[RMDB]
This 177-nucleotide RNA was probed chemically with DMS and 2A3. The 2A3 profile rests on 5,925 reads.
RNA sequence: GGGAACGACUCGAGUAGAGUCGAAAACGCGGUACCUACGCUGGCCGGUACGAUCAGCGCUAGCUGCGCUCUGGCCCACGGUACAGCGCGAGCGGCCAGCGCAGUACCGUCGGCGCGAGCGUACGUAGCUACGCUCACGAUUCGUCGUGAGCGUAGCAAAAGAAACAACAACAACAAC
Reactivity to DMS in 0.01 (KOAc 150mM, MgCl2 10mM, bicine 150mM(pH8.5), 24C), signal-to-noise 3, nucleotides 027 to 126: c090g010c040g010g010u000a030c100c030u010a070c030g020c020u000g020g010c010c010g010g010u010a090c160g000a110u020c060a080g000c020g010c130u000a080g030c090u000g000c040g010c010u000c030u010g020g000c010c010c080a030c070g000g030u000a040c020a040g020c040g010c020g010a110g000c020g000g000c020c010a150g000c000g020c060a050g000u000a000c010c000g030u000c280g020g010c020g010c170g000a040g010c010g010u000a060c120g000u020a100
Reactivity to 2A3 in 0.01 (KOAc 150mM, MgCl2 10mM, bicine 150mM(pH8.5), 24C), signal-to-noise 3, nucleotides 027 to 126: c040g000c020g030g020u050a030c010c020u050a020c040g020c010u010g000g000c030c030g060g090u200a090c070g040a140u120c050a020g000c020g000c090u050a040g020c040u050g000c010g000c020u020c040u060g130g010c010c010c010a050c020g010g020u100a110c030a050g020c010g000c010g000a050g030c040g040g000c030c000a010g000c010g010c000a000g010u000a000c000c010g000u000c010g000g040c040g000c000g020a000g020c010g000u040a020c070g010u060a040
Annotation:
DMS adducts were read by reverse transcription with MarathonRT. For 2A3 the reverse transcriptase was SuperScript II with manganese. The reactions ran in a buffer of 150 mM KOAc, 10 mM MgCl2 and 150 mM bicine (pH 8.5), at 24 C. Values cover nucleotides 27 to 126.